[RMDB]
RNA sequence: GGGAACGACUCGAGUAGAGUCGAAAACAAUUAACGGCACCUCGUAGGUGGUGCCGAACCUGCGUGAACUACUAACACGCUACGUGCAGUCUGGUAUGACUGCAAACAAUUAGUAGAAUGGAUGAAAAUUAUUAUCGUGCUUCGGCACGAUAAUAAUAAAAGAAACAACAACAACAAC
Reactivity to 2A3 in 0.01 (KOAc 150mM, MgCl2 10mM, bicine 150mM(pH8.5), 24C), signal-to-noise 5, nucleotides 027 to 126: c050a060a110u220u120a170a010c010g000g010c000a010c010c000u070c070g080u120a180g010g280u060g000g000u000g010c000c020g000a000a010c000c000u020g000c000g010u020g010a180a180c010u000a000c010u010a010a010c010a000c010g010c050u070a020c110g060u050g010c000a020g010u000c030u150g160g060u300a160u290g010a000c000u000g000c000a000a020a000c010a030a040u000u000a000g010u000a010g050a030a150u140g110g110a060u120g080a050a080a020
Reactivity to DMS in 0.01 (KOAc 150mM, MgCl2 10mM, bicine 150mM(pH8.5), 24C), signal-to-noise 2, nucleotides 027 to 126: c220a070a100u040u040a130a100c020g010g020c000a000c000c000u000c030g000u090a020g050g010u000g000g000u000g000c000c000g000a000a040c040c000u010g010c020g020u000g000a080a090c030u010a000c010u000a030a000c000a000c010g000c000u040a010c280g000u010g020c000a020g000u000c000u000g010g020u060a110u090g020a030c010u020g000c010a010a020a070c100a110a130u020u000a000g000u000a010g000a300a140u020g000g000a070u010g000a050a100a060